[RMDB]
RNA sequence: GGGAACGACUCGAGUAGAGUCGAAAAUAGCACUCCUGAGUUACCCACACCAGGAAGGUAUGGUUCACUUCGUCCGCAUUGCGCUCCUUCGCUGUUUGAUUCAGGAGGUUCAGGGCAAUGGUUGACAAGCUGCUGAUUUAUUCGUAAAUCAGCAGCUAAAAGAAACAACAACAACAAC
Reactivity to 2A3 in 0.01 (KOAc 150mM, MgCl2 10mM, bicine 150mM(pH8.5), 24C), signal-to-noise 2, nucleotides 027 to 126: u140a000g040c010a010c030u030c010c000u040g000a010g130u010u020a100c000c010c030a030c000a010c010c000a010g000g070a040a070g060g010u140a090u160g030g080u030u100c070a060c140u140u120c090g070u000c000c030g000c020a010u000u060g000c170g030c030u090c050c000u040u050c070g010c280u030g060u060u150u190g100a130u160u090c000a020g040g020a000g000g010u050u140c020a000g000g040g010c040a020a060u080g020g020u030u050g020a040c020a030
Reactivity to DMS in 0.01 (KOAc 150mM, MgCl2 10mM, bicine 150mM(pH8.5), 24C), signal-to-noise 2, nucleotides 027 to 126: u000a100g010c070a090c070u000c010c000u000g000a120g000u000u000a120c110c070c080a180c160a050c100c020a040g010g020a050a020g020g010u010a040u010g010g000u020u000c070a120c070u000u000c100g010u000c030c240g010c020a030u010u000g000c020g000c020u000c040c000u000u010c040g020c030u000g000u000u000u010g000a130u010u000c040a060g020g010a010g010g000u010u000c150a030g000g000g010c010a010a040u000g010g000u000u010g020a030c090a100
Structure probing data (2A3 and DMS) for a 177-nucleotide construct.
Reactivities are given for positions 27 through 126.
For DMS the reverse transcriptase was MarathonRT.